[RMDB]
RNA sequence: GGGAACGACUCGAGUAGAGUCGAAAAAUUGGAUUAGUUUCAUACGUUGUACAUGUAAGCCUAAGCCAAUCGCUACAGGGUCAUCAAGUAUAGAUAUUUUCAUUUUUGGUAUAACAAGAAAUAACAAGCCUCACAUUAUUUUCGAAUAAUGUGAGGCAAAAGAAACAACAACAACAAC
Reactivity to DMS in 0.01 (KOAc 150mM, MgCl2 10mM, bicine 150mM(pH8.5), 24C), signal-to-noise 2, nucleotides 027 to 126: a040u020u000g000g000a040u000u000a130g000u000u020u000c060a080u010a080c100g050u000u020g050u000a060c200a070u010g000u000a070a170g000c240c050u010a080a070g050c000c050a000a070u030c000g000c050u010a070c180a120g030g000g040u000c060a010u010c080a010a100g000u010a020u000a130g010a050u060a060u000u000u040u010c040a100u030u030u000u010u020g000g000u000a050u040a050a030c080a010a010g000a010a000a000u000a040a120c130a000a120
Reactivity to 2A3 in 0.01 (KOAc 150mM, MgCl2 10mM, bicine 150mM(pH8.5), 24C), signal-to-noise 2, nucleotides 027 to 126: a000u060u230g070g020a050u020u020a150g050u190u000u000c030a060u080a230c050g130u060u000g020u000a000c040a060u000g030u060a050a080g150c000c000u030a040a000g030c090c060a020a070u050c010g000c000u040a030c080a050g060g100g090u050c100a070u130c000a040a130g000u000a070u030a150g130a080u080a090u070u070u120u090c060a100u110u030u000u180u270g070g000u090a010u010a180a030c030a000a050g140a110a150a000u220a190a000c100a180a020